Chemical mapping of a 177-nucleotide RNA with DMS. The reactions ran in a buffer of 150 mM KOAc, 10 mM MgCl2 and 150 mM bicine (pH 8.5), at 24 C. For DMS, 1,214 sequencing reads were counted.

[RMDB]
RNA sequence: GGGAACGACUCGAGUAGAGUCGAAAAGCUUGAAUUUAGAAAUCUGACCCCUGGGAACACUAACACCCGUGUGUCCCGUUACACUAGCACAGCCCGGCACCGCCUGCGCCGUGGUGCCGACGGGACAACUCCCUCCAGUAUUCGUACUGGAGGGAGUAAAAGAAACAACAACAACAAC
Reactivity to DMS in 0.01 (KOAc 150mM, MgCl2 10mM, bicine 150mM(pH8.5), 24C), signal-to-noise 2, nucleotides 027 to 126: g010c060u000u030g010a080a110u010u000u020a090g020a080a100a090u000c050u000g000a250c040c020c010c070u000g000g020g010a130a030c070a070c120u010a070a130c230a050c000c020c040g000u010g000u000g020u000c000c000c010g020u000u000a050c190a070c080u010a050g000c070a080c140a110g000c030c020c050g000g000c000a030c040c070g020c030c040u010g020c180g020c160c140g050u000g020g030u000g020c020c000g000a010c010g000g000g010a020c040a020
The data come from the RNA Mapping Database (RMDB), library OK2TRN.